[RMDB]
RNA sequence: GGGAACGACUCGAGUAGAGUCGAAAAGAUAUGGAUGCGAUUGUCAGCACCCUUUAAUGCCUCCAUCGGAAACGAUGGAAGGCCUUGAUGUGUAGGAUAGGUGCUUGGAUUUAUCGCAUCCUAAGUCGUACAACAAUUAGUUCGCUAAUUGUUGUACAAAAGAAACAACAACAACAAC
Reactivity to DMS in 0.01 (KOAc 150mM, MgCl2 10mM, bicine 150mM(pH8.5), 24C), signal-to-noise 6, nucleotides 027 to 126: g010a080u010a300u000g000g010a000u000g010c010g010a030u000u010g010u010c000a050g000c000a010c000c010c030u000u000u000a020a020u000g000c000c000u000c000c000a010u000c000g010g000a130a110a230c010g020a010u000g000g010a020a030g010g010c010c080u000u000g000a030u000g010u020g010u010a130g010g020a170u010a140g010g010u000g010c010u010u000g020g000a020u010u010u000a010u000c000g010c000a020u000c010c000u000a030a080g010u010c110
Reactivity to 2A3 in 0.01 (KOAc 150mM, MgCl2 10mM, bicine 150mM(pH8.5), 24C), signal-to-noise 9, nucleotides 027 to 126: g100a070u160a050u230g010g000a000u000g000c000g010a010u010u030g030u030c000a010g000c010a010c010c010c000u030u050u060a060a030u050g000c010c000u000c010c000a010u000c000g000g030a100a050a040c030g000a000u000g000g020a040a100g010g000c010c010u040u060g030a080u070g200u110g200u300a150g200g250a240u120a190g000g020u010g010c000u040u180g180g000a040u220u280u160a030u020c000g000c000a000u000c000c000u000a010a010g010u020c070